[RMDB]
Structure probing data (DMS and 2A3) for a 177-nucleotide construct. The DMS profile rests on 8,442 reads. As a SHAPE reagent, 2A3 marks flexible, mostly unpaired nucleotides at the ribose 2'-OH. The RNA was probed in 150 mM KOAc, 10 mM MgCl2 and 150 mM bicine (pH 8.5) at 24 C. 2A3 adducts were read by reverse transcription with SuperScript II with manganese.
RNA sequence: GGGAACGACUCGAGUAGAGUCGAAAAAUCUGCUUAUCCAGCGAGGCGAUCAGCUCCUUGAGGCUUCCAGCCUUUGCCGCAAGUUCCUCGGAAUGCUUGCGUUGCGCCUCGAUCUCCUGCUCGGAUAACCUUUUAAUCGUUUCGACGAUUAAAAGGUAAAAGAAACAACAACAACAAC
Reactivity to DMS in 0.01 (KOAc 150mM, MgCl2 10mM, bicine 150mM(pH8.5), 24C), signal-to-noise 6, nucleotides 027 to 126: a070u000c040u010g000c140u000u010a020u000c020c010a030g000c000g010a020g000g010c090g000a040u000c050a090g010c040u000c130c180u000u010g010a030g010g000c010u000u010c290c170a120g010c000c050u000u000u000g020c120c010g000c040a010a020g000u000u000c020c030u010c240g030g010a070a050u000g010c020u000u000g010c050g010u010u000g020c110g010c060c040u010c070g000a030u000c040u000c010c000u000g000c010u000c140g030g000a040u000a060
Reactivity to 2A3 in 0.01 (KOAc 150mM, MgCl2 10mM, bicine 150mM(pH8.5), 24C), signal-to-noise 5, nucleotides 027 to 126: a010u040c030u060g020c030u080u020a010u010c000c000a000g020c060g180a030g020g000c010g000a020u020c030a020g030c030u100c040c060u070u120g020a010g030g010c020u300u080c110c070a020g000c010c010u010u040u090g040c000c010g010c000a000a020g010u060u060c010c000u020c060g070g050a070a050u190g040c000u000u020g010c010g110u090u100g060c030g000c040c000u080c180g020a020u020c000u010c010c000u010g010c010u030c090g000g010a010u010a020